[RMDB]
Structure probing data (2A3 and DMS) for a 177-nucleotide construct. For DMS, 3,195 sequencing reads were counted. For 2A3, 1,445 sequencing reads were counted.
RNA sequence: GGGAACGACUCGAGUAGAGUCGAAAAAAAAGUGUCCCGGGCAUCCGGGGCUGCGAGGGUCAUUACGUUUACCGUGCCGAAGCUAUGGGUUGUGCAGGGAGUCAGCAGCAAAAACCUCGUAGCAAUCAUGCUCUAGAUUCUUCGGAAUCUAGAGCAUAAAAGAAACAACAACAACAAC
Reactivity to 2A3 in 0.01 (KOAc 150mM, MgCl2 10mM, bicine 150mM(pH8.5), 24C), signal-to-noise 2, nucleotides 027 to 126: a000a020a000a000g070u040g010u050c020c010c000g000g000g000c090a120u160c010c000g000g020g000g000c000u000g010c000g000a050g000g000g010u120c070a080u070u140a030c040g020u030u020u130a090c070c020g020u060g010c040c000g070a060a000g000c050u070a140u180g070g020g040u050u040g040u140g060c010a010g000g060g000a030g060u040c030a020g000c010a000g040c040a000a060a000a050a050c000c010u010c020g010u020a000g010c000a000a040u120c030
Reactivity to DMS in 0.01 (KOAc 150mM, MgCl2 10mM, bicine 150mM(pH8.5), 24C), signal-to-noise 2, nucleotides 027 to 126: a010a030a040a040g000u020g000u000c000c000c020g000g000g000c210a100u010c010c000g000g000g000g000c000u040g000c020g000a060g000g000g000u040c150a080u010u020a110c120g020u000u000u000a100c050c030g050u000g050c010c010g010a090a060g000c090u050a110u050g040g010g000u000u000g000u050g030c070a060g000g020g000a090g010u000c070a050g010c080a080g000c150a060a110a060a090a110c000c010u010c020g050u000a020g000c040a110a130u040c120